[RMDB]
RNA sequence: GGGAACGACUCGAGUAGAGUCGAAAAGAGGCGAAAUAAUUCCCAUCUCCUAUGUACGGCCGGAGAUGGGUCUGGCCGUACUAAUAAGCCUCAUAGUGACGAGAGUCACGAAUUCUGGAUAGCCUCUGGUAGUCGGCUAUCCUGUGACUACCGUAGACCUACCCUAUGCCUUCGGGCAUAGGGUAGGAAAAGAAACAACAACAACAAC
Reactivity to 2A3 in 0.01 (KOAc 150mM, MgCl2 10mM, bicine 150mM(pH8.5), 24C), signal-to-noise 1, nucleotides 027 to 156: g000a000g000g000c060g060a100a070a150u240a050a050u110u100c020c010c010a040u000c020u020c010c050u210a100u160g010u000a000c010g020g000c050c050g000g000a010g020a110u300g010g000g120u000c000u000g020g000c050c000g000u000a000c020u000a010a010u020a010a010g000c000c000u000c050a070u170a040g130u150g030a030c040g020a000g000a000g240u000c000a000c030g000a000a150u180u060c040u100g000g000a000u000a000g000c000c000u000c010u110g180g000u100a090g080u110c080g000g000c000u010a000u000c000c000u000g000u000g000a080c020u040a170c000c080g000u000a020g060a110
An RNA of 207 nucleotides, treated with 2A3 and read out base by base. Conditions: 150 mM KOAc, 10 mM MgCl2 and 150 mM bicine (pH 8.5), 24 C. The 2A3 profile rests on 438 reads. 2A3 adducts were read by reverse transcription with SuperScript II with manganese.